[RMDB]
RNA sequence: GGGAACGACUCGAGUAGAGUCGAAAAUCACAGUCGCAUGCUGGUGCUGCUGGUCACAUCAUGAUCUAACGGUGACUGAGAUGGUCUGGGUCAAGCUUGGAUACGCGGCUCUGGUAAUAUUCAAGAGCCGGCUACACUGAUUCGUCAGUGUAGCCGGAAAAGAAACAACAACAACAAC
Reactivity to 2A3 in 0.01 (KOAc 150mM, MgCl2 10mM, bicine 150mM(pH8.5), 24C), signal-to-noise 1, nucleotides 027 to 126: u080c010a040c040a050g030u040c000g010c090a070u090g030c030u080g070g000u050g010c020u020g010c000u040g060g020u050c000a050c000a170u080c020a020u140g040a020u060c030u110a120a070c110g150g010u030g020a000c010u010g010a060g040a080u100g000g050u020c030u040g080g000g060u060c030a030a160g000c020u060u060g060g000a030u050a090c040g030c050g070g030c000u030c020u050g000g000u070a090a120u080a130u240u040c050a110a000g020a040g220
Reactivity to DMS in 0.01 (KOAc 150mM, MgCl2 10mM, bicine 150mM(pH8.5), 24C), signal-to-noise 1, nucleotides 027 to 126: u010c020a180c060a100g040u010c070g000c060a070u000g010c070u000g010g020u000g000c110u010g020c080u000g000g010u000c070a070c080a090u000c060a100u020g040a090u020c110u020a050a110c050g020g010u000g000a070c020u000g000a090g000a100u000g020g000u000c040u000g010g010g000u000c040a050a100g000c080u010u010g010g000a080u000a090c090g020c130g020g000c020u000c000u000g000g010u000a040a060u010a160u000u000c080a100a090g000a100g000
Source: RMDB library OK2TST, as collected in RNAgym. The record gives the reactivity of an RNA of 177 nucleotides to 2A3 and DMS. The reactions ran in a buffer of 150 mM KOAc, 10 mM MgCl2 and 150 mM bicine (pH 8.5), at 24 C. For DMS, 1,016 sequencing reads were counted. For DMS the reverse transcriptase was MarathonRT. As a SHAPE reagent, 2A3 marks flexible, mostly unpaired nucleotides at the ribose 2'-OH. For 2A3 the reverse transcriptase was SuperScript II with manganese.